[RMDB]
RNA sequence: GGGAACGACUCGAGUAGAGUCGAAAAGAUAUGGAUCCGGUAAGGGAGCUGUGUCGGAAACGACCAGCGACGAUCUUACGCGGAUCCUAAGUCAAAACCGAUUGAAAACUUCGGUUUUCAAUCGGAAGGAUUCUAAGAAGUUCGCUUCUUAGAAUCCAAAAGAAACAACAACAACAAC
Reactivity to DMS in 0.01 (KOAc 150mM, MgCl2 10mM, bicine 150mM(pH8.5), 24C), signal-to-noise 3, nucleotides 027 to 126: g010a060u000a300u010g000g000a000u000c000c000g030g000u000a000a010g000g000g010a050g010c000u000g020u020g010u000c000g040g010a110a060a180c020g010a010c000c020a020g010c010g020a040c250g000a020u000c000u000u000a010c010g010c000g020g000a000u000c000c000u000a000a080g000u000c040a060a080a120a150c000c000g000a010u000u000g000a010a010a000a000c000u000u010c230g030g010u000u000u000u000c000a010a010u000c000g010g000a020a050
Reactivity to 2A3 in 0.01 (KOAc 150mM, MgCl2 10mM, bicine 150mM(pH8.5), 24C), signal-to-noise 3, nucleotides 027 to 126: g000a000u050a020u190g000g020a000u000c010c010g000g040u000a000a010g040g020g010a000g010c010u070g030u080g010u300c010g010g020a060a070a040c000g000a010c010c000a000g010c000g020a030c010g010a020u010c000u030u070a120c290g000c000g300g000a000u000c000c000u000a010a000g010u010c020a010a020a080a190c010c000g000a010u000u010g010a010a010a000a000c030u060u120c300g140g000u020u010u010u000c000a000a000u020c000g000g000a000a010
An RNA of 177 nucleotides, treated with DMS and 2A3 and read out base by base. 2A3 adducts were read by reverse transcription with SuperScript II with manganese. DMS adducts were read by reverse transcription with MarathonRT. The 2A3 profile rests on 5,791 reads. The data come from the RNA Mapping Database (RMDB), library TTRDEL. The RNA was probed in 150 mM KOAc, 10 mM MgCl2 and 150 mM bicine (pH 8.5) at 24 C.